[RMDB]
RNA sequence: GGGAACGACUCGAGUAGAGUCGAAAACUUAUUUUUGCUAGGAGGAAUGAAAGUACAUGUUAAAGAGACAUACUUGGCUGAUCUAGCCAUUUUCCAAAGUCUCCCCCCGCCAGAGGAAUAUCUCAUAAGUCUGGUUCCUAAUUACAUUUAGCAGAUAAGUGGUAUCAUUAUUCGUAAUGAUACCACUAAAAGAAACAACAACAACAAC
Reactivity to DMS in 0.01 (KOAc 150mM, MgCl2 10mM, bicine 150mM(pH8.5), 24C), signal-to-noise 2, nucleotides 027 to 156: c070u020u000a070u000u000u000u000u000g020c070u010a050g010g030a050g050g010a070a080u000g020a070a050a110g010u000a040c090a110u000g020u000u000a070a110a090g010a150g030a040c030a090u000a000c050u010u010g030g020c010u000g020a090u020c100u000a060g010c020c030a060u000u000u010u000c120c050a060a150a170g030u010c050u000c000c010c020c000c020c100g020c000c040a010g000a090g030g020a220a130u000a120u000c060u000c130a140u000a070a270g040u000c010u000g030g000u000u000c050c000u010a030a090u020u010a070c060a180u000u000u000a100g000c050a070g000a110u000a110
Reactivity to 2A3 in 0.01 (KOAc 150mM, MgCl2 10mM, bicine 150mM(pH8.5), 24C), signal-to-noise 2, nucleotides 027 to 156: c020u020u120a100u180u150u010u110u070g040c010u040a050g010g030a050g000g040a060a020u090g050a040a030a030g020u060a020c020a030u060g060u150u200a140a090a030g010a000g030a000c020a030u080a040c020u010u010g000g000c030u040g060a220u140c080u170a010g000c010c000a010u060u010u010u000c040c030a130a080a000g000u000c000u000c000c010c000c000c020c000g010c000c000a000g000a000g040g060a110a030u060a080u170c100u000c050a060u080a060a020g070u000c000u000g010g000u010u100c000c000u060a090a090u060u000a010c030a060u090u060u070a020g020c010a000g010a140u120a220